[RMDB]
RNA sequence: GGGAACGACUCGAGUAGAGUCGAAAAGAAUGGACCCUCAGCUGGCGGACGCCGCGUUCGACGCGGUGAGAAGGAGAGGUUUUCCCAGUGUUGGAAAAAGUCAAAAAGGCCAGAGGACACAGAACACUACGUUCCACUGAUUCGUCAGUGGAACGUAAAAAGAAACAACAACAACAAC
Reactivity to DMS in 0.01 (KOAc 150mM, MgCl2 10mM, bicine 150mM(pH8.5), 24C), signal-to-noise 1, nucleotides 027 to 126: g000a100a090u020g000g020a030c060c000c000u000c000a200g020c050u010g020g000c030g010g020a200c030g020c010c010g030c020g010u000u010c270g000a080c000g010c000g000g020u000g000a050g000a130a120g000g020a070g000a110g010g010u000u000u000u010c000c000c010a150g020u000g000u000u030g020g000a040a070a100a110a190g000u020c070a040a090a040a090a260g000g000c020c000a010g000a170g000g000a030c120a020c100a110g020a050a060c160a030c080

Chemical mapping of a 177-nucleotide RNA with DMS. For DMS, 994 sequencing reads were counted.